[RMDB]
RNA sequence: GGGAACGACUCGAGUAGAGUCGAAAAGCGUACUACGCUUCGGGCCACAGGGAGUCGACUGACGGUACUCCCAAAUAGGAGGACGAAACCGACGAAGAACUGUGGUCUCUAGCGUGAGCGUAUCGCAAAGUGGGCGAUUCUUCGGAAUCGCCCACAACCUAUAAUCAUUGUUCGCAAUGAUUAUAGGAAAAGAAACAACAACAACAAC
Reactivity to DMS in 0.01 (KOAc 150mM, MgCl2 10mM, bicine 150mM(pH8.5), 24C), signal-to-noise 1, nucleotides 027 to 156: g050c010g000u010a060c030u010a030c020g040c030u000u000c000g000g080g000c000c020a020c050a020g000g000g020a300g000u000c020g000a070c040u010g000a240c030g000g000u000a080c000u000c000c010c030a030a130a100u000a080g010g010a090g020g030a080c030g010a080a090a060c090c030g020a080c000g040a070a190g000a110a190c000u010g010u010g000g020u010c010u000c020u000a020g000c020g000u000g000a120g020c010g000u000a100u000c050g020c080a040a150a100g000u000g000g020g000c030g010a040u010u000c000u020u000c300g000g050a080a050u000c000g010c030c000c000a000c010a010a030
Reactivity to 2A3 in 0.01 (KOAc 150mM, MgCl2 10mM, bicine 150mM(pH8.5), 24C), signal-to-noise 2, nucleotides 027 to 156: g010c020g000u000a040c020u000a000c020g010c010u020u010c020g000g000g020c000c000a000c000a000g000g010g030a030g010u000c010g010a070c040u130g080a060c010g010g100u300a030c010u050c020c030c010a010a050a030u120a010g000g000a000g010g000a010c000g020a070a040a010c040c000g000a000c000g160a240a100g010a050a000c000u000g000u000g000g010u020c000u000c010u030a020g010c020g020u040g020a040g050c060g010u010a030u300c010g000c050a060a040a030g010u000g000g000g020c000g010a010u020u000c010u050u040c190g030g010a000a000u000c000g000c010c000c010a000c000a000a000